[RMDB]
RNA sequence: GGGAACGACUCGAGUAGAGUCGAAAACUUAAUACCCUGCUACCGAUCCGCCGAGCCUCUCCCACGGGUGAAGAUGGAUCGUUAUUUCAGUGGGAUAGUCAAGGGGAGUGCCCGCGGCCCCAAGGCGAAACUUUAGCAGGAUCGCUUCCCGGAAAUCGCCCUAUUUAUAGUUCGCUAUAAAUAGGGCAAAAGAAACAACAACAACAAC
Reactivity to 2A3 in 0.01 (KOAc 150mM, MgCl2 10mM, bicine 150mM(pH8.5), 24C), signal-to-noise 3, nucleotides 027 to 156: c030u100u150a110a020u110a230c020c010c000u000g000c010u050a080c000c020g030a010u000c010c020g030c020c040g100a080g130c020c000u000c010u000c000c000c000a010c010g010g000g000u020g050a030a000g020a040u050g010g000a000u010c000g010u030u090a200u020u220u140c030a020g000u000g010g020g010a010u010a010g010u020c020a030a030g000g010g010g010a020g030u070g060c000c010c020g040c010g100g070c000c000c000c000a010a010g030g000c000g010a060a010a010c020u110u150u060a000g010c000a000g010g000a030u060c020g020c080u030u000c010c000c010g050g070a060a120a040u210c150
Reactivity to DMS in 0.01 (KOAc 150mM, MgCl2 10mM, bicine 150mM(pH8.5), 24C), signal-to-noise 1, nucleotides 027 to 156: c040u040u010a120a240u000a110c030c010c010u010g000c030u010a110c200c010g000a050u010c000c000g040c040c000g010a300g030c030c040u010c080u030c000c010c020a100c090g020g000g030u010g010a090a110g010a010u010g000g040a040u000c040g000u010u000a060u000u020u010c080a090g090u000g000g030g010a120u010a070g010u010c020a050a300g030g020g000g000a150g040u000g000c040c040c000g010c020g010g030c010c000c010c000a060a300g030g060c000g000a070a080a180c110u010u010u000a090g020c030a080g000g000a100u000c060g030c020u000u000c010c000c000g010g000a060a070a110u010c080
An RNA of 207 nucleotides, treated with 2A3 and DMS and read out base by base. Reactivities are given for positions 27 through 156. DMS adducts were read by reverse transcription with MarathonRT. The reactions ran in a buffer of 150 mM KOAc, 10 mM MgCl2 and 150 mM bicine (pH 8.5), at 24 C.